[RMDB]
RNA sequence: GGGAACGACUCGAGUAGAGUCGAAAACUGUAGCUACGGCUACAGAGUUACUCUUCGGAGUAACAGAUUCUCGUGAGAGAAUCACAGCUACGUGAGUAGCUGAGGGAUUGCUGACUGAUAGUGCAAACAGUACUGUGAAGGAACUAAUGAAACUGGGCUAUAAGUGCGCAUUCCACCAAUACGUGAGCAUUCGCGCAUUACCAUUCUCCAGAGGAUUUAAAUGCACAAACCUAUAUGCCUUUUGGCAUAUGAUUACACUUCGUUAUACAGUUCUAUUCGUAGAACUGAAAAGAAACAACAACAACAAC
Reactivity to 2A3 in 0.01 (KOAc 150mM, MgCl2 10mM, bicine 150mM(pH8.5), 24C), signal-to-noise 7, nucleotides 027 to 266: c000u000g010u000a000g000c010u020a020c250g140g000c000u000a000c010a000g000a010g000u000u000a010c000u020c000u030u090c280g110g000a000g010u010a000a000c000a000g000a020u010u000c010u010c010g080u140g020a210g000a000g010a050a010u030c030a000c000a070g010c000u010a010c000g120u100g130a100g020u010a010g000c010u010g010a120g050g060g020a040u090u150g040c030u040g060a050c010u020g030a070u070a110g030u010g040c020a040a140a080c030a070g030u060a150c020u070g030u080g190a100a090g090g050a080a060c090u090a130a100u120g080a040a040a040c080u030g010g020g010c040u080a050u030a300a040g040u020g010c010g000c000a000u030u000c010c000a020c010c030a140a140u140a190c080g010u020g000a040g040c070a090u040u100c100g000c020g000c000a000u030u020a020c010c010a040u040u030c040u010c020c010a020g010a030g050g000a000u040u070u140a080a150a040u120g020c030a010c000a090a070a020c040c020u040a020u010a010u050g010c000c020u140u260u210u300g000g000c000a000u010a000u000g030a030u050u270a040c110a030c080u110u150c040g080u070u060a120u070a140
Reactivity to DMS in 0.01 (KOAc 150mM, MgCl2 10mM, bicine 150mM(pH8.5), 24C), signal-to-noise 6, nucleotides 027 to 266: c000u000g020u000a000g010c010u000a090c230g040g000c000u000a010c000a010g000a190g010u000u000a000c000u000c000u000u020c180g010g010a010g010u000a000a010c010a170g010a050u000u000c000u000c010g000u020g010a190g000a020g000a020a010u000c030a270c030a000g000c000u000a000c010g000u020g000a240g010u000a010g000c000u000g010a120g000g000g000a120u010u020g010c060u010g010a110c040u000g020a080u020a090g020u000g000c030a080a120a130c110a060g000u000a060c050u010g000u010g010a090a050g000g000a090a110c130u000a030a040u000g000a220a130a060c020u000g000g010g010c110u020a090u010a080a060g010u000g000c020g020c000a030u010u000c000c000a020c030c300a100a140u010a110c300g010u000g010a050g010c160a030u000u000c170g010c000g010c010a000u000u000a060c260c090a080u000u000c120u010c010c020a020g000a050g000g000a110u010u000u000a020a090a110u000g000c030a030c070a070a090a120c110c080u000a020u000a010u010g000c000c000u000u010u010u020g010g020c000a000u000a010u000g000a110u010u010a060c190a070c140u010u000c060g000u010u010a110u010a190
This 307-nucleotide RNA was probed chemically with 2A3 and DMS. 2A3 adducts were read by reverse transcription with SuperScript II with manganese. Source: RMDB library POS240, as collected in RNAgym. Conditions: 150 mM KOAc, 10 mM MgCl2 and 150 mM bicine (pH 8.5), 24 C. DMS adducts were read by reverse transcription with MarathonRT.